Source: RMDB library OK3TST, as collected in RNAgym.
Structure probing data (2A3) for a 207-nucleotide construct.
For 2A3 the reverse transcriptase was SuperScript II with manganese.
Values cover nucleotides 27 to 156.
RNA sequence: GGGAACGACUCGAGUAGAGUCGAAAAGUCAGGGUGGGGUCUCAGUAUUGUCUCUGAGCCCUUGCUCAGGGCUCACACUGUAUCAAGCUCAAGUCUCCAGCUGUAUCAGGUCCAUCCCCACAUGGGGACCACUCCAGGAGUCUGAGACAACCUCAGACAUCCCAGUCCUGUUCGCAGGACUGGGAUGAAAAGAAACAACAACAACAAC
Reactivity to 2A3 in 0.01 (KOAc 150mM, MgCl2 10mM, bicine 150mM(pH8.5), 24C), signal-to-noise 1, nucleotides 027 to 156: g060u050c020a000g000g070g000u130g000g030g000g050u100c110u050c070a040g030u040a140u300u270g080u000c060u050c170u280g000a000g010c050c160c040u040u050g010c010u030c040a020g000g000g000c000u000c000a060c000a010c030u000g010u120a140u110c070a140a070g000c040u040c090a080a100g080u000c010u000c020c020a100g000c070u050g010u050a100u090c010a050g000g030u000c030c040a100u060c000c010c000c000a080c110a150u260g000g000g000g010a030c000c020a050c040u010c000c000a030g050g120a050g020u020c030u020g020a000g010a030c070a040a060c010c000u030c010a010g020a000